[RMDB]
The record gives the reactivity of an RNA of 177 nucleotides to 2A3 and DMS. It was measured as part of the RMDB library TTRINS. The DMS profile rests on 4,248 reads. DMS adducts were read by reverse transcription with MarathonRT.

RNA sequence: GGGAACGACUCGAGUAGAGUCGAAAAGAUAUGGAACAUUAGAGCGAAGAACUUGUGAUCAUCAUCUAUCGGUUCGGAAACGAACCGAGUAGAUGAUGAUCACAAGGGAGCUCGAUGUUCCUAAGUCGUGAAAGACUAAGUUCGCUUAGUCUUUCACAAAAGAAACAACAACAACAAC
Reactivity to 2A3 in 0.01 (KOAc 150mM, MgCl2 10mM, bicine 150mM(pH8.5), 24C), signal-to-noise 1, nucleotides 027 to 126: g040a000u220a060u300g020g010a000a040c030a020u070u300a300g010a010g000c070g280a300a030g020a100a050c000u010u000g020u000g040a000u000c010a010u000c020a000u050c010u040a020u050c000g000g000u030u000c030g040g040a000a190a030c010g000a000a000c000c010g010a000g000u020a000g000a030u000g000a010u000g000a000u000c010a000c000a000a020g000g000g000a000g000c000u000c010g000a000u000g000u010u000c000c000u000a000a030g060u050c120
Reactivity to DMS in 0.01 (KOAc 150mM, MgCl2 10mM, bicine 150mM(pH8.5), 24C), signal-to-noise 3, nucleotides 027 to 126: g000a130u010a300u000g010g010a000a010c000a020u000u000a130g040a020g010c000g010a120a170g020a110a260c000u000u000g010u000g010a010u000c000a000u000c000a010u000c000u000a040u000c000g000g000u000u000c000g000g000a100a070a240c000g020a010a010c010c000g000a010g000u000a000g000a020u000g010a000u000g020a000u000c000a000c000a000a010g010g000g000a060g020c010u010c010g000a000u000g000u000u000c000c000u010a030a050g000u010c140